[RMDB]
RNA sequence: GGGAACGACUCGAGUAGAGUCGAAAAACUGCGACAGGGCGGAUGCGUGAAACAAAAUGCAUCUCGGCAAUGCUCUGCGCAUCUACAUACCAGCAGCCGAGAACUGGCGCAGAUUACAAGCGCAGACAAUUUUAAAUUUAUUCGUAAAUUUAAAAUUAAAAGAAACAACAACAACAAC
Reactivity to 2A3 in 0.01 (KOAc 150mM, MgCl2 10mM, bicine 150mM(pH8.5), 24C), signal-to-noise 6, nucleotides 027 to 126: a000c000u010g000c010g030a010c020a020g030g040g100c080g060g020a010u010g000c000g010u030g080a160a110a060c090a040a110a050a010u120g010c000a030u000c010u000c010g010g000c010a030a090u070g000c040u020c040u050g000c010g020c000a010u010c010u100a130c050a100u140a080c050c030a010g040c010a020g200c000c010g050a070g020a090a050c010u020g010g000c000g000c010a000g000a060u070u060a020c030a080a040g000c010g010c040a010g020a070c040
Reactivity to DMS in 0.01 (KOAc 150mM, MgCl2 10mM, bicine 150mM(pH8.5), 24C), signal-to-noise 5, nucleotides 027 to 126: a110c020u000g000c020g000a050c020a010g000g000g030c070g010g010a050u000g010c010g010u010g010a110a100a150c300a100a070a120a060u010g000c030a050u000c010u000c020g010g010c020a140a100u010g010c030u000c040u030g000c020g010c010a040u020c070u020a100c170a140u020a110c080c070a080g010c040a090g010c010c000g010a050g010a070a080c020u020g000g000c010g000c010a020g010a130u020u010a080c110a080a100g010c010g020c030a030g000a170c140